This 177-nucleotide RNA was probed chemically with DMS and 2A3. The reactions ran in a buffer of 150 mM KOAc, 10 mM MgCl2 and 150 mM bicine (pH 8.5), at 24 C. Values cover nucleotides 27 to 126. DMS adducts were read by reverse transcription with MarathonRT.
[RMDB]
RNA sequence: GGGAACGACUCGAGUAGAGUCGAAAAGAAGAGAGUCGACGCAAGCGACGAUAACUGCGGAACGGUAACCGUAGUACCGUAUGGUCAUGGCACGCGAAAGCGAAAGAUCGAACCAUGCCAUAAGAGACAGUGGUCCCAUAUUCGUAUGGGACCACUGAAAAGAAACAACAACAACAAC
Reactivity to DMS in 0.01 (KOAc 150mM, MgCl2 10mM, bicine 150mM(pH8.5), 24C), signal-to-noise 4, nucleotides 027 to 126: g030a150a080g000a040g000a130g020u000c030g020a120c120g000c230a070a100g010c020g010a040c040g010a090u020a050a110c040u040g020c020g010g000a090a050c120g000g000u010a040a070c030c020g010u050a010g040u000a040c050c010g000u010a000u010g000g000u040c020a000u000g000g000c140a180c100g030c010g000a100a130a100g000c000g000a070a060a120g000a160u060c160g040a060a240c000c000a010u000g000c010c010a010u020a030a070g040a190g000a180
Reactivity to 2A3 in 0.01 (KOAc 150mM, MgCl2 10mM, bicine 150mM(pH8.5), 24C), signal-to-noise 4, nucleotides 027 to 126: g130a070a010g100a000g010a010g050u010c020g020a140c080g010c130a070a100g070c030g050a040c030g020a050u080a050a040c030u040g010c000g000g000a040a030c020g040g040u060a140a090c000c020g030u060a010g040u000a070c000c030g010u030a020u000g020g000u240c020a000u010g000g000c040a010c060g050c000g050a120a000a020g030c020g070a100a060a020g050a120u120c070g000a050a030c000c000a000u000g010c000c000a020u020a020a050g130a010g030a030